Chemical mapping of a 177-nucleotide RNA with DMS and 2A3.
The RNA was probed in 150 mM KOAc, 10 mM MgCl2 and 150 mM bicine (pH 8.5) at 24 C.
DMS adducts were read by reverse transcription with MarathonRT.
For 2A3 the reverse transcriptase was SuperScript II with manganese.
The 2A3 profile rests on 1,125 reads.
[RMDB]
RNA sequence: GGGAACGACUCGAGUAGAGUCGAAAAAAUUGCCAACCUCCACUGGGUGGGUCAAGGUUGAGGUAUAGAAUCCUAUUCGCUCCUGAUAGGAGAAAUUCUAUAUUGCUUAUAUAUGUGCUUACGCACAUGCCGUAUAACAGUUCGCUGUUAUACGGCAAAAAGAAACAACAACAACAAC
Reactivity to DMS in 0.01 (KOAc 150mM, MgCl2 10mM, bicine 150mM(pH8.5), 24C), signal-to-noise 4, nucleotides 027 to 126: a040a070u030u020g020c110c010a070a040c030c000u000c020c030a080c060u030g030g000g010u000g020g000g050u010c240a140a060g000g010u000u000g010a120g020g000u000a020u000a000g010a010a000u000c000c010u010a000u000u010c110g000c140u020c040c030u000g000a030u010a000g000g020a200g000a070a130a060u000u000c000u000a000u010a020u000u000g000c060u010u000a100u030a120u050a060u010g020u000g010c000u000u040a130c300g000c000a010c000a040
Reactivity to 2A3 in 0.01 (KOAc 150mM, MgCl2 10mM, bicine 150mM(pH8.5), 24C), signal-to-noise 3, nucleotides 027 to 126: a000a020u270u170g070c010c000a030a040c000c000u050c010c020a020c060u190g100g000g160u040g010g050g010u110c060a030a030g030g000u020u060g050a010g030g000u000a000u010a000g000a040a010u040c000c000u030a090u070u100c060g030c090u080c030c030u030g010a020u020a000g010g000a030g050a040a070a000u030u010c000u000a010u000a030u000u070g100c010u210u030a070u030a050u060a080u260g020u000g020c040u120u230a060c130g000c000a010c000a030